Source: RMDB library VIROID, as collected in RNAgym. An RNA of 207 nucleotides, treated with 2A3 and read out base by base. The 2A3 profile rests on 525 reads. 2A3 adducts were read by reverse transcription with SuperScript II with manganese.

RNA sequence: GGGAACGACUCGAGUAGAGUCGAAAAUCGGGAUUUCUUCGUCUCGGACCGGCUCAUCUUCGGCAAAGGGCGGCGGUCCUCAGUGCUCUUACUCUUUUCUGUAAAGAGGAGACUGCUGGACUCUCCGCCCAAGCCGAGAUGGGCCUCAGUUCCGAGCCCGAAGUGAAAUCUUCGGAUUUCACUUCGGAAAAGAAACAACAACAACAAC
Reactivity to 2A3 in 0.01 (KOAc 150mM, MgCl2 10mM, bicine 150mM(pH8.5), 24C), signal-to-noise 1, nucleotides 027 to 156: u120c020g080g000g110a210u050u020u000c010u000u080c070g170u030c020u000c000g000g000a000c010c010g000g050c010u020c020a000u070c070u300u220c030g000g000c000a070a120a300g010g000g010c010g000g030c060g000g010u000c020c000u010c000a070g010u070g190c000u010c030u160u200a200c010u100c000u030u060u150u090c110u260g300u300a020a010a020g000a010g010g000a000g000a000c010u010g050c050u020g000g030a050c050u070c020u010c110c010g030c000c000c000a000a000g010c000c000g000a000g000a000u000g000g000g010c000c000u020c000a000g000u090u090c000c000g010a000g000c000